[RMDB]
RNA sequence: GGGAACGACUCGAGUAGAGUCGAAAAUGUAGCAAUUUUAUUGAAGAUUAAAGUUUGAUUGACCUUUGUUAGGGUGAUUAACCCUUCUGAAAUUAAAAGCCAGAGCUGAAUUAUUCUGCUCAAUUUACACGGAGAAAUAUUUCGAUAUUUCUCCGUGAAAAGAAACAACAACAACAAC
Reactivity to DMS in 0.01 (KOAc 150mM, MgCl2 10mM, bicine 150mM(pH8.5), 24C), signal-to-noise 3, nucleotides 027 to 126: u020g010u010a110g000c060a060a030u030u000u000u000a030u010u000g000a160a020g000a100u000u020a080a120a100g000u000u000u010g010a040u000u000g000a050c000c010u000u030u010g000u010u020a060g000g010g000u010g000a070u000u000a010a030c030c070c020u000u000c010u000g000a130a030a050u010u020a020a090a080a140g000c080c140a030g000a020g010c010u000g010a030a150u030u050a060u030u000c020u000g000c030u000c020a090a060u010u000u020a080
Reactivity to 2A3 in 0.01 (KOAc 150mM, MgCl2 10mM, bicine 150mM(pH8.5), 24C), signal-to-noise 4, nucleotides 027 to 126: u170g030u090a010g040c040a060a100u020u020u010u040a080u050u150g020a020a010g020a060u150u130a170a050a110g070u050u050u100g050a020u000u060g180a050c010c000u120u070u090g170u140u200a040g030g000g000u010g050a070u020u040a010a000c020c030c000u010u020c000u020g000a030a060a040u110u110a070a180a040a000g030c060c060a040g010a000g000c030u030g020a020a050u270u140a120u220u030c030u030g000c010u000c000a010a040u020u030u010a060